[RMDB]
This 177-nucleotide RNA was probed chemically with 2A3 and DMS. It was measured as part of the RMDB library OK2TST. High 2A3 reactivity points to a flexible backbone, as in loops and unpaired stretches. For 2A3, 18,714 sequencing reads were counted.

RNA sequence: GGGAACGACUCGAGUAGAGUCGAAAAACCAAGACCCACGAUGAUUUAUGUUCAGAUUGGGAGAAAGUUGACUCCCUCAUCUAUGGUGAUGACCGAUUGUCAACAUUUCCUGAACUACCAGGUGACAGUAUUAAAUGGGAUUCGUCCCAUUUAAUACAAAAGAAACAACAACAACAAC
Reactivity to 2A3 in 0.01 (KOAc 150mM, MgCl2 10mM, bicine 150mM(pH8.5), 24C), signal-to-noise 9, nucleotides 027 to 126: a000c010c000a020a010g110a060c010c010c020a010c060g060a070u090g010a010u030u150u260a150u220g090u040u020c010a020g040a120u050u110g060g030g010a050g070a030a080a020g030u030u020g010a010c010u010c020c020c000u000c000a010u000c010u080a190u300g300g030u150g050a020u020g020a010c030c050g100a120u040u150g010u010c000a010a000c020a090u060u050u060c010c010u030g030a080a060c020u050a080c060c030a010g040g000u020g060a050c060a070
Reactivity to DMS in 0.01 (KOAc 150mM, MgCl2 10mM, bicine 150mM(pH8.5), 24C), signal-to-noise 9, nucleotides 027 to 126: a110c020c020a150a110g010a140c070c020c010a070c120g010a180u010g000a070u010u010u010a070u020g010u000u000c030a030g010a280u010u010g010g000g010a090g000a040a050a090g010u000u000g000a030c010u000c020c020c070u000c010a000u000c010u000a110u010g020g020u010g010a010u000g010a020c050c070g000a050u010u000g010u000c010a000a010c020a160u000u000u000c010c010u000g000a050a050c080u000a100c150c040a060g000g010u000g000a100c180a130